Structure probing data (DMS and 2A3) for a 177-nucleotide construct. For 2A3, 1,185 sequencing reads were counted. The RNA was probed in 150 mM KOAc, 10 mM MgCl2 and 150 mM bicine (pH 8.5) at 24 C. DMS adducts were read by reverse transcription with MarathonRT.
RNA sequence: GGGAACGACUCGAGUAGAGUCGAAAAUUACAUUACGCACGCCUGAUCAGCGGAUCCAUUAUGUAGUACGGAUCGAAGAUACUACUGGAUCCCGUGAGGUAUCGGAUCCAGCGGCGGAUCCCAUCACGACGCUUGGACCAUUCGUGGUCCAAGCGUCAAAAGAAACAACAACAACAAC
Reactivity to DMS in 0.01 (KOAc 150mM, MgCl2 10mM, bicine 150mM(pH8.5), 24C), signal-to-noise 1, nucleotides 027 to 126: u000u000a130c150a220u010u010a090c040g000c040a090c030g010c010c040u020g000a070u000c010a200g000c050g040g000a010u000c000c010a100u000u000a130u000g010u000a020g040u000a000c070g010g010a130u010c210g010a090a100g010a190u000a020c000u000a010c010u010g000g000a000u000c070c000c030g000u010g010a090g010g000u040a090u010c090g000g000a040u000c050c090a040g000c020g000g000c010g000g010a050u000c000c010c030a030u020c300a120c160
Reactivity to 2A3 in 0.01 (KOAc 150mM, MgCl2 10mM, bicine 150mM(pH8.5), 24C), signal-to-noise 2, nucleotides 027 to 126: u100u080a020c010a060u110u100a070c040g040c150a150c170g010c020c000u020g060a060u050c000a030g000c040g060g000a000u010c020c000a010u180u170a090u300g040u010a000g000u010a020c060g090g070a080u130c130g020a160a000g000a120u060a000c000u030a000c000u020g000g010a000u020c000c100c000g040u000g070a040g100g170u110a090u070c040g010g000a000u020c010c070a020g020c000g000g000c010g000g050a020u020c020c000c000a010u080c070a020c060